RNA sequence: GGGAACGACUCGAGUAGAGUCGAAAAGAAACAGGAUCGACAAGGGUGUAAAGAUCGCUCUUUUACUCGGCAUGAUACCACCGCUAUCGGGUCAACAGAGUAGUUGCAAAUGACAACAAUGCUCAGGAAGGGGUAGCACCGUUCGCGGUGCUACCAAGGGAUAAUCCCAGUUCGCUGGGAUUAUCCCAAAAGAAACAACAACAACAAC
Reactivity to 2A3 in 0.01 (KOAc 150mM, MgCl2 10mM, bicine 150mM(pH8.5), 24C), signal-to-noise 2, nucleotides 027 to 156: g040a020a140a020c060a080g130g020a080u010c040g020a030c050a050a130g020g060g020u050g040u130a090a110a000g060a020u150c060g010c010u050c010u020u200u030u110a070c050u050c050g010g000c020a010u120g000a010u020a060c010c010a020c000c010g000c070u070a050u120c030g000g000g000u030c010a000a020c020a080g010a000g040u060a030g050u020u010g000c000a070a200a260u180g050a070c000a000a020c000a000a220u080g000c020u040c030a000g030g080a010a060g100g000g000g000u000a000g010c000a000c010c000g010u060u020c120g000c000g080g000u000g000c000u000a010c000c000a000a000
Chemical mapping of a 207-nucleotide RNA with 2A3.
For 2A3, 1,130 sequencing reads were counted.
Conditions: 150 mM KOAc, 10 mM MgCl2 and 150 mM bicine (pH 8.5), 24 C.